[RMDB]
Chemical mapping of a 207-nucleotide RNA with 2A3. For 2A3 the reverse transcriptase was SuperScript II with manganese. Values cover nucleotides 27 to 156.
RNA sequence: GGGAACGACUCGAGUAGAGUCGAAAACAGGAAACUGGUUCAUCGUUUUCCUUGGUAGUAUAGCGGAAACCAUAAAUAAGAAGAACUCUAAGUGCUUGAGUAGAGUUAAAAUAAUUAGACAGGCAAUUAAGGUACUCCACGUUCGCGUGGAGUACAAGAUAUAACUAGAGUUCGCUCUAGUUAUAUCAAAAGAAACAACAACAACAAC
Reactivity to 2A3 in 0.01 (KOAc 150mM, MgCl2 10mM, bicine 150mM(pH8.5), 24C), signal-to-noise 4, nucleotides 027 to 156: c030a020g090g030a060a060a040c060u100g020g060u090u060c020a060u050c020g000u010u020u050u050c010c000u020u040g080g000u020a040g020u030a050u060a090g030c030g020g000a050a030a020c010c000a040u080a090a120a010u130a070a030g090a050a020g030a040a020c000u000c000u010a020a020g030u060g220c010u010u000g020a010g000u000a000g010a010g010u110u150a010a000a010a010u150a000a000u170u010a000g010a010c000a000g000g000c020a010a010u140u140a140a040g070g000u000a000c000u000c000c000a000c010g010u060u070c190g030c000g070u000g010g010a000g000u000a000c000a000a000